Chemical mapping of a 177-nucleotide RNA with 2A3 and DMS. Values cover nucleotides 27 to 126.
[RMDB]
RNA sequence: GGGAACGACUCGAGUAGAGUCGAAAAUAAAAAGAUCGAAAGAUCAAAAGGCGUACAUGUUGUCGACCUUCACGUGGUGUGCGCUGUCAACUGACUGCUGUCAGGUUAACAGACAACAAAUAAAAAAACUAGAUCUAUUGUUCGCAAUAGAUCUAGUAAAAGAAACAACAACAACAAC
Reactivity to 2A3 in 0.01 (KOAc 150mM, MgCl2 10mM, bicine 150mM(pH8.5), 24C), signal-to-noise 3, nucleotides 027 to 126: u140a000a080a020a000a010g010a000u010c010g020a050a030a040g020a000u000c050a030a040a000a010g020g020c010g000u020a010c010a040u040g010u020u010g010u020c010g000a020c010c010u090u060c150a070c170g140u130g000g000u010g010u000g020c000g000c020u010g020u020c030a050a080c010u020g010a000c020u150g080c110u160g150u000c010a000g000g000u000u020a020a000c010a020g020a000c000a000a000c010a000a100a000u120a000a040a000a000a000a000
Reactivity to DMS in 0.01 (KOAc 150mM, MgCl2 10mM, bicine 150mM(pH8.5), 24C), signal-to-noise 3, nucleotides 027 to 126: u020a040a060a100a120a050g020a000u000c010g010a190a070a150g020a020u000c000a090a040a090a060g000g000c010g030u010a010c020a100u000g020u000u000g010u010c010g020a040c010c000u000u000c160a090c230g030u000g010g010u000g040u000g020c000g020c000u010g000u000c110a090a170c000u010g000a010c010u010g010c170u000g020u000c000a010g010g020u000u000a010a020c010a060g010a010c020a000a010c010a060a060a070u040a010a020a090a100a050a070
The reactions ran in a buffer of 150 mM KOAc, 10 mM MgCl2 and 150 mM bicine (pH 8.5), at 24 C.
For 2A3, 4,680 sequencing reads were counted.
It was measured as part of the RMDB library M2PK90.